[RMDB]
RNA sequence: GGGAACGACUCGAGUAGAGUCGAAAAACAAGGUGCACGUGCGUGCGAGCAGUUUUCGAAAUCGCACGUUUCACGUAAAGACGCAACUCUACUCGAGAAAGCGAGUCACGCAGACAGCGUCAAGGAAUGCACUAAUUCUGUUCGCAGAAUUAGUGCAAAAAGAAACAACAACAACAAC
Reactivity to DMS in 0.01 (KOAc 150mM, MgCl2 10mM, bicine 150mM(pH8.5), 24C), signal-to-noise 2, nucleotides 027 to 126: a090c210a170a090g000g030u000g000c300a040c000g020u000g010c010g000u000g000c020g020a040g020c300a190g070u000u000u000u000c070g030a010a160a080u050c040g000c000a010c000g020u000u000u000c070a030c020g020u000a030a060a090g000a040c090g060c020a100a010c000u000c000u000a010c000u020c000g020a020g000a020a040a070g020c050g000a060g000u020c070a100c070g000c070a070g000a030c130a020g010c030g010u010c060a090a080g010g020a100a130
Reactivity to 2A3 in 0.01 (KOAc 150mM, MgCl2 10mM, bicine 150mM(pH8.5), 24C), signal-to-noise 1, nucleotides 027 to 126: a000c090a160a020g090g000u020g000c080a000c010g000u000g000c000g000u010g020c010g010a060g020c140a060g070u000u080u150u220c100g090a070a040a090u020c000g000c000a000c020g000u030u030u070c010a010c000g060u110a040a030a000g080a020c010g010c000a000a040c020u020c010u000a000c010u000c010g010a000g010a000a020a000g020c010g010a030g060u050c030a020c150g020c010a020g030a180c050a110g000c050g000u000c030a020a040g120g040a090a120